RNA sequence: GGGAACGACUCGAGUAGAGUCGAAAAGACGGGGGCCUCAGGGCGAGGAGCGUUGCCGCCGCGAUAGACCCGAGUAUCGCGAGGAGGAGGAGCGCGGGUGCCUCCCUCAUACCCUCCACCCGGGGAGCAGUGUACGGAAUUUCGAUUCCGUACACUGAAAAGAAACAACAACAACAAC
Reactivity to DMS in 0.01 (KOAc 150mM, MgCl2 10mM, bicine 150mM(pH8.5), 24C), signal-to-noise 3, nucleotides 027 to 126: g000a110c170g010g010g030g000g020c080c060u000c070a110g010g020g040c150g010a060g000g000a120g020c070g010u000u010g010c040c030g000c080c010g010c020g000a020u000a040g020a150c020c020c010g000a170g010u000a020u000c000g000c000g000a170g000g010a120g000g010a100g010g000a060g020c060g010c060g010g010g010u010g020c020c020u010c010c020c030u000c030a070u010a130c090c020c010u000c030c020a170c030c000c030g010g000g010g010a210g020
Reactivity to 2A3 in 0.01 (KOAc 150mM, MgCl2 10mM, bicine 150mM(pH8.5), 24C), signal-to-noise 1, nucleotides 027 to 126: g080a030c060g000g000g030g020g040c000c020u030c020a060g050g050g030c050g030a060g030g020a060g030c040g010u050u090g120c020c010g010c040c010g000c010g000a010u010a010g060a080c000c010c000g020a020g080u050a010u020c040g000c040g010a110g040g020a080g030g040a050g000g000a050g020c070g000c000g020g040g070u060g060c000c030u030c030c000c000u010c010a080u180a100c020c030c000u020c020c020a030c000c000c010g030g000g000g000a030g050